[RMDB]
RNA sequence: GGGAACGACUCGAGUAGAGUCGAAAAAUAGUGUUGUAAGACUGAAUUCUUUGGAUUCCAUUUUUCAGCUGAGGUGGGGUUGUUGUAGCACUAUAUUAUGCCAGCAAUUGGACAUCUUUAGGCUAGAACCAAGGAAGUAAUUCGUUACUUCCUUGGUAAAAGAAACAACAACAACAAC
Reactivity to 2A3 in 0.01 (KOAc 150mM, MgCl2 10mM, bicine 150mM(pH8.5), 24C), signal-to-noise 2, nucleotides 027 to 126: a010u120a020g080u070g050u060u070g030u060a050a060g020a030c020u050g040a080a050u080u000c060u120u080u060g090g020a100u090u110c010c020a050u020u080u010u040u130c060a000g000c020u070g050a020g000g080u050g010g030g000g000u040u040g020u000u050g000u000a020g000c020a000c100u000a050u000a010u160u070a050u070g020c000c000a020g050c050a080a130u190u040g000g000a040c000a070u000c010u030u020u070a030g020g000c000u000a010g030a070
Reactivity to DMS in 0.01 (KOAc 150mM, MgCl2 10mM, bicine 150mM(pH8.5), 24C), signal-to-noise 4, nucleotides 027 to 126: a070u020a080g010u000g010u000u000g000u000a080a090g020a100c080u010g010a080a070u010u000c040u000u000u010g020g000a110u000u000c010c060a110u000u000u000u000u010c060a050g010c060u010g000a050g010g010u000g010g010g010g010u000u010g020u010u000g010u000a060g020c010a070c060u000a050u010a050u000u000a050u000g010c010c010a030g000c180a070a100u010u010g000g000a090c030a020u000c060u010u000u000a060g010g000c040u000a090g010a150
Structure probing data (2A3 and DMS) for a 177-nucleotide construct.
The reactions ran in a buffer of 150 mM KOAc, 10 mM MgCl2 and 150 mM bicine (pH 8.5), at 24 C.
DMS adducts were read by reverse transcription with MarathonRT.
For 2A3 the reverse transcriptase was SuperScript II with manganese.
It was measured as part of the RMDB library OK2TRN.